[RMDB]
RNA sequence: GGGAACGACUCGAGUAGAGUCGAAAACUGUGAGGCUUCGGCCUCACAGAUAGGUUUCUUUUUAGUGAUUUUUCCAAACCCCUUUGUGCAAAAAUGAUUAAACUCGCGUACGUUUCGACGUACGCAACCUUUACAUAGGGUUCGCCCUAUGUAAAGGAAAAGAAACAACAACAACAAC
Reactivity to 2A3 in 0.01 (KOAc 150mM, MgCl2 10mM, bicine 150mM(pH8.5), 24C), signal-to-noise 3, nucleotides 027 to 126: c010u010g000u000g010a000g010g000c030u060u130c300g110g000c010c000u000c000a000c000a000g000a000u040a010g010g000u020u010u040c000u010u090u020u010u040a040g010u030g120a030u020u010u020u040u020c020c000a030a030a080c040c030c020c010u060u100u070g050u050g050c050a000a000a000a020a040u080g090a070u120u120a090a100a050c100u080c160g000c000g000u010a000c000g000u020u030u110c160g070a020c000g000u010a000c000g000c000a000a010
Reactivity to DMS in 0.01 (KOAc 150mM, MgCl2 10mM, bicine 150mM(pH8.5), 24C), signal-to-noise 3, nucleotides 027 to 126: c000u010g010u010g010a000g010g010c010u000u010c220g030g010c000c000u010c000a000c000a000g010a070u010a070g010g010u000u000u000c000u000u000u000u010u000a030g010u000g000a030u000u000u010u000u000c010c010a010a050a090c030c020c040c060u010u000u000g020u000g010c140a010a020a020a030a030u000g000a040u000u000a080a070a100c260u010c140g000c000g000u000a000c000g020u000u010u020c170g010a020c020g010u010a020c000g020c000a020a020
Source: RMDB library M2PK50, as collected in RNAgym. An RNA of 177 nucleotides, treated with 2A3 and DMS and read out base by base. DMS adducts were read by reverse transcription with MarathonRT. Conditions: 150 mM KOAc, 10 mM MgCl2 and 150 mM bicine (pH 8.5), 24 C. For DMS, 2,922 sequencing reads were counted.